[RMDB]
Conditions: 150 mM KOAc, 10 mM MgCl2 and 150 mM bicine (pH 8.5), 24 C. An RNA of 177 nucleotides, treated with DMS and 2A3 and read out base by base. As a SHAPE reagent, 2A3 marks flexible, mostly unpaired nucleotides at the ribose 2'-OH. For DMS the reverse transcriptase was MarathonRT. High DMS reactivity at an A or C suggests that its Watson-Crick edge is free. Reactivities are given for positions 27 through 126. The data come from the RNA Mapping Database (RMDB), library OK1LIB.
RNA sequence: GGGAACGACUCGAGUAGAGUCGAAAACGAACGGAACGAGCCCGAGUUGGCGGAAUUGCUGCAGGAUUCGCUGCGUGCGCUGGACACUGAGGAAGAUCCGAUCGUGUGGCAACGCCACACGCUCGACAUUAAAUGGCAGGUUCGCCUGCCAUUUAAUAAAAGAAACAACAACAACAAC
Reactivity to DMS in 0.01 (KOAc 150mM, MgCl2 10mM, bicine 150mM(pH8.5), 24C), signal-to-noise 5, nucleotides 027 to 126: c060g010a080a140c090g000g000a090a070c100g000a080g000c030c010c040g020a100g020u020u010g000g000c060g020g000a060a070u030u010g000c030u000g010c020a070g000g000a110u030u030c090g020c030u010g020c040g020u000g000c040g000c050u020g000g010a090c110a070c050u000g000a100g000g020a100a070g000a100u010c090c000g000a030u010c000g030u000g040u020g010g010c020a040a140c240g000c020c010a000c000a010c030g000c050u000c010g000a070c170
Reactivity to 2A3 in 0.01 (KOAc 150mM, MgCl2 10mM, bicine 150mM(pH8.5), 24C), signal-to-noise 6, nucleotides 027 to 126: c060g030a050a000c020g000g040a050a020c020g010a040g030c010c030c010g040a050g050u090u110g040g020c010g030g070a070a090u050u150g040c030u030g010c010a030g020g070a180u090u120c060g020c060u050g000c040g030u090g010c030g000c020u050g020g020a020c040a020c100u060g030a050g080g050a090a040g040a110u050c040c010g000a030u020c010g030u000g010u010g010g000c070a230a050c260g010c010c000a000c000a000c000g010c000u000c000g060a060c030